The record gives the reactivity of an RNA of 207 nucleotides to DMS and 2A3. Values cover nucleotides 27 to 156. The data come from the RNA Mapping Database (RMDB), library M2RFPK. DMS adducts were read by reverse transcription with MarathonRT. The DMS profile rests on 5,124 reads.

[RMDB]
RNA sequence: GGGAACGACUCGAGUAGAGUCGAAAAGCGUAACGGCUGGGUGUAACCCAACUCUAGGUGUGCUGAUUAGCGGGCUUGACUCCGUAACAAAUAGGCACUGGUGGUAAACAGCAUCCCACCUACUCACAAAGCUCCAAAUUCUUCGGAAUUUGGAGAACAGAUCUAAUAACUUCGGUUAUUAGAUCUGAAAAGAAACAACAACAACAAC
Reactivity to DMS in 0.01 (KOAc 150mM, MgCl2 10mM, bicine 150mM(pH8.5), 24C), signal-to-noise 3, nucleotides 027 to 156: g000c040g020u000a100a090c100g020g020c020u020g010g010g000u000g020u000a020a300c010c010c020a090a020c020u010c080u010a130g000g030u010g030u010g010c010u020g030a200u020u010a120g050c030g010g020g030c040u000u020g010a110c100u000c000c030g000u000a060a090c090a040a070a150u000a100g000g030c060a030c010u000g020g030u000g010g010u000a090a060a120c030a100g000c020a300u000c090c020c040a050c030c010u000a070c040u000c000a040c070a100a070a220g010c000u000c010c000a000a010a030u000u000c010u000u000c300g060g010a010a010u000u000u000g010g000a010g000a010a050
Reactivity to 2A3 in 0.01 (KOAc 150mM, MgCl2 10mM, bicine 150mM(pH8.5), 24C), signal-to-noise 6, nucleotides 027 to 156: g020c010g020u040a030a060c070g060g010c040u030g010g020g020u060g050u080a120a130c010c010c000a050a070c030u060c060u120a060g100g010u030g020u030g100c010u020g010a110u060u070a030g020c010g000g010g030c040u110u140g040a110c050u020c070c000g000u020a030a000c040a030a080a060u140a070g030g000c010a020c050u030g010g020u030g000g020u020a080a100a050c010a040g060c000a050u070c010c000c000a010c000c010u050a070c030u030c050a080c050a080a120a020g040c000u000c000c000a000a000a000u000u000c000u030u060c140g050g000a000a000u000u000u010g010g000a000g000a010a000